[RMDB]
RNA sequence: GGGAACGACUCGAGUAGAGUCGAAAAAAUUGCAAGGAAAUAACUGACAAGGAAUUGGACAAGAAAAUGAAGGAGCUCGCCGCCGUCAUGAGCGACCCUGACCUGGAAACUGAGACUAUGUGCCUCCCCAAAUCAACAUCUUCGGAUGUUGAUUUGGAAAAGAAACAACAACAACAAC
Reactivity to DMS in 0.01 (KOAc 150mM, MgCl2 10mM, bicine 150mM(pH8.5), 24C), signal-to-noise 1, nucleotides 027 to 126: a030a010u000u000g020c060a070a120g060g010a050a080a090u000a110a120c030u010g010a060c130a060a080g020g020a130a050u010u010g020g030a060c040a050a050g000a050a040a050a050u000g010a140a050g010g010a150g010c020u000c090g010c020c030g040c010c060g000u000c090a060u000g010a060g010c010g010a070c070c000c010u000g000a120c040c040u000g000g000a050a040a040c060u000g010a150g020a080c100u000a060u010g000u000g020c040c020u000c050c100
Background:
An RNA of 177 nucleotides, treated with DMS and read out base by base. It was measured as part of the RMDB library OK2TRN. Values are in units of 0.01, from 0 to 300, in steps of 10. The reactions ran in a buffer of 150 mM KOAc, 10 mM MgCl2 and 150 mM bicine (pH 8.5), at 24 C.